This 177-nucleotide RNA was probed chemically with DMS and 2A3. The reactions ran in a buffer of 150 mM KOAc, 10 mM MgCl2 and 150 mM bicine (pH 8.5), at 24 C. Reactivities are given for positions 27 through 126. For DMS the reverse transcriptase was MarathonRT. 2A3 adducts were read by reverse transcription with SuperScript II with manganese.
[RMDB]
RNA sequence: GGGAACGACUCGAGUAGAGUCGAAAAAUGGUCCGUGCUGGAUUGGUGUCCUAGUUAACAAUGGCUACGUUUAUCAAUAUACAUUGCAAGCAGGAGAAACGCAGUCAACGACUUUACCAGAAGGUGCCUGCACGUACCGGUUCGCCGGUACGUGCAGAAAAGAAACAACAACAACAAC
Reactivity to DMS in 0.01 (KOAc 150mM, MgCl2 10mM, bicine 150mM(pH8.5), 24C), signal-to-noise 1, nucleotides 027 to 126: a100u000g010g000u050c010c000g000u000g080c000u000g000g020a180u050u040g000g000u000g120u050c120c050u000a020g000u020u000a170a040c140a140a220u000g020g000c000u000a040c020g000u000u000u010a070u040c030a130a040u000a210u000a070c180a150u030u050g000c210a110a100g000c170a110g080g000a040g010a130a020a010c000g010c030a000g010u000c000a000a050c220g000a010c050u000u000u020a060c000c010a030g000a170a150g000g020u000g000c000
Reactivity to 2A3 in 0.01 (KOAc 150mM, MgCl2 10mM, bicine 150mM(pH8.5), 24C), signal-to-noise 1, nucleotides 027 to 126: a070u170g130g000u060c010c010g000u090g000c030u080g000g050a010u000u190g000g000u120g010u000c000c000u000a110g090u110u090a070a000c000a050a090u110g020g000c000u000a000c000g040u000u000u290a170u150c050a030a000u000a000u070a200c180a130u090u130g170c050a030a050g070c020a010g100g000a000g110a000a030a000c090g000c000a000g000u000c000a000a000c000g000a000c000u070u080u070a070c080c000a000g040a100a000g090g030u070g000c000